[RMDB]
RNA sequence: GGGAACGACUCGAGUAGAGUCGAAAACCAUCAGGAAAUACAGGCUACCGAAACAUGCGUCUCUAUGCAGGCGACAACCGGGAGGUUGACGUCCCUGCGAUAAGCCACGAGGCCAUCGGUUCACUCCACUGGAGCGGUUAUUCGUAACCGCUCCAGUAAAAGAAACAACAACAACAAC
Reactivity to 2A3 in 0.01 (KOAc 150mM, MgCl2 10mM, bicine 150mM(pH8.5), 24C), signal-to-noise 3, nucleotides 027 to 126: c010c000a010u130c070a020g050g090a050a040a010u170a140c050a030g080g040c020u040a030c010c020g020a060a130a040c150a040u100g020c070g040u000c030u000c000u050a040u230g010c010a000g050g000c030g010a000c000a000a000c000c000g080g050g070a110g010g000u000u000g030a000c020g100u140c110c000c010u000g020c000g020a030u030a100a060g120c050c040a030c070g010a000g000g000c000c000a030u050c040g010g000u000u110c040a060c030u040c020c030
Reactivity to DMS in 0.01 (KOAc 150mM, MgCl2 10mM, bicine 150mM(pH8.5), 24C), signal-to-noise 1, nucleotides 027 to 126: c030c000a130u020c260a000g050g000a040a010a140u030a150c100a180g030g000c140u070a070c000c010g070a090a000a120c170a030u000g000c250g010u000c000u000c110u030a170u020g070c000a060g060g000c000g000a030c020a100a000c030c020g000g040g050a120g000g000u000u010g000a200c090g000u060c070c000c010u000g000c000g030a050u000a000a090g000c150c130a010c240g000a220g000g020c130c000a080u000c000g000g000u020u000c000a170c170u010c020c080
Source: RMDB library RFM100, as collected in RNAgym. Chemical mapping of a 177-nucleotide RNA with 2A3 and DMS. For DMS the reverse transcriptase was MarathonRT. The reactions ran in a buffer of 150 mM KOAc, 10 mM MgCl2 and 150 mM bicine (pH 8.5), at 24 C. For 2A3, 1,420 sequencing reads were counted.